[RMDB]
RNA sequence: GGGAACGACUCGAGUAGAGUCGAAAAGAUAAAAGCACUCAAAUGAAAUAUUCUGGUAGUUCACUUAAUCGUGUUAGUAGAUAUACAAUGAUAAGCAAUGACAACCUUAAUUUUGUUAUUGAUGGGAUGGACUAAAAUACUUCGGUAUUUUAGUCCAAAAAGAAACAACAACAACAAC
Reactivity to DMS in 0.01 (KOAc 150mM, MgCl2 10mM, bicine 150mM(pH8.5), 24C), signal-to-noise 1, nucleotides 027 to 126: g000a100u010a050a060a080a110g030c090a050c080u000c040a060a080a070u020g000a050a060a070u000a050u000u000c050u000g000g030u000a070g010u030u000c100a060c010u000u010a030a080u000c040g000u000g000u010u010a090g010u000a030g000a080u010a080u010a020c030a060a090u000g000a040u000a010a050g020c060a030a080u000g000a040c020a030a020c150c060u010u000a050a030u000u000u000u000g000u010u000a040u000u000g010a090u020g000g000g020a200